Chemical mapping of a 177-nucleotide RNA with 2A3 and DMS. 2A3 is a SHAPE reagent: it acylates the 2'-hydroxyl of flexible nucleotides of all four kinds.
RNA sequence: GGGAACGACUCGAGUAGAGUCGAAAAGAAGGCACUUUCGAGUGCCUUCAUGGGGAGCUCAGGUCUCCCUCGCUUGCAAACUCCCUAAGGGAGGAGACCUAAUUAGGUGCACUUUCGAGUGCACCAAACAGGGAUUAAUUUUCGAAUUAAUCCCUGUAAAAGAAACAACAACAACAAC
Reactivity to 2A3 in 0.01 (KOAc 150mM, MgCl2 10mM, bicine 150mM(pH8.5), 24C), signal-to-noise 6, nucleotides 027 to 126: g000a000a000g010g000c030a000c020u060u090u190c280g080a010g010u000g000c000c000u000u000c000a000u010g000g000g000g010a040g030c060u060c220a010g030g030u020c000u020c010c060c010u000c020g120c020u020u100g060c080a160a080a260c080u070c010c020c020u070a070a080g070g000g010a070g010g000a000g010a010c000c010u010a040a140u110u190a060g000g000u000g000c010a000c000u030u050u100c140g040a010g000u000g010c000a000c000c000a000a010
Reactivity to DMS in 0.01 (KOAc 150mM, MgCl2 10mM, bicine 150mM(pH8.5), 24C), signal-to-noise 7, nucleotides 027 to 126: g000a020a010g010g010c000a000c000u000u010u010c140g010a020g030u000g000c010c000u000u000c000a030u000g010g010g000g010a150g010c120u010c150a040g010g010u000c000u000c040c020c010u000c010g000c060u000u000g010c150a080a100a180c160u010c010c010c010u010a070a080g000g010g010a070g010g000a020g000a020c000c010u000a120a110u010u010a080g010g020u000g000c000a010c000u000u000u010c180g010a020g010u000g000c000a000c000c000a010a030
Annotation
The RNA was probed in 150 mM KOAc, 10 mM MgCl2 and 150 mM bicine (pH 8.5) at 24 C. The 2A3 profile rests on 9,757 reads. For DMS, 11,728 sequencing reads were counted. Reactivities are rounded to 0.1 and cut off at 0 and 3. For 2A3 the reverse transcriptase was SuperScript II with manganese.